[RMDB]
RNA sequence: GGGAACGACUCGAGUAGAGUCGAAAAGUCUCUAUCUUCGGAUAGAGACAAAUAUAAGUACGACUUAGAGCUAGAUCAAUUAAUAUCGUCCACAUCGUAAAAAAAGAGGUAUGUUCGCAUACCUCAAUCCACUACUAGUCUUCGGACUAGUAGUGGAAAAAGAAACAACAACAACAAC
Reactivity to DMS in 0.01 (KOAc 150mM, MgCl2 10mM, bicine 150mM(pH8.5), 24C), signal-to-noise 1, nucleotides 027 to 126: g020u020c000u030c000u000a000u000c020u010u010c270g000g000a000u000a010g000a040g020a000c020a030a060a030u000a050u010a050a130g040u000a080c040g030a050c020u000u000a100g010a090g000c080u000a060g000a060u000c030a060a070u000u010a030a110u000a090u010c010g020u000c020c020a090c140a050u000c140g000u010a000a000a000a140a060a030a230g010a010g000g000u020a000u000g000u000u010c090g010c000a000u000a000c000c020u000c020a000a060
Reactivity to 2A3 in 0.01 (KOAc 150mM, MgCl2 10mM, bicine 150mM(pH8.5), 24C), signal-to-noise 1, nucleotides 027 to 126: g000u000c010u000c010u020a000u010c010u000u090c250g130g000a030u010a030g000a050g030a000c010a010a000a000u010a000u010a000a040g070u060a030c030g000a000c040u010u200a060g030a010g070c010u040a030g040a100u070c060a080a000u080u170a120a100u130a020u160c000g030u050c030c010a040c010a120u120c140g070u110a000a000a080a050a000a000a130g010a030g000g020u000a000u000g030u070u030c220g000c040a000u000a010c000c000u000c000a000a010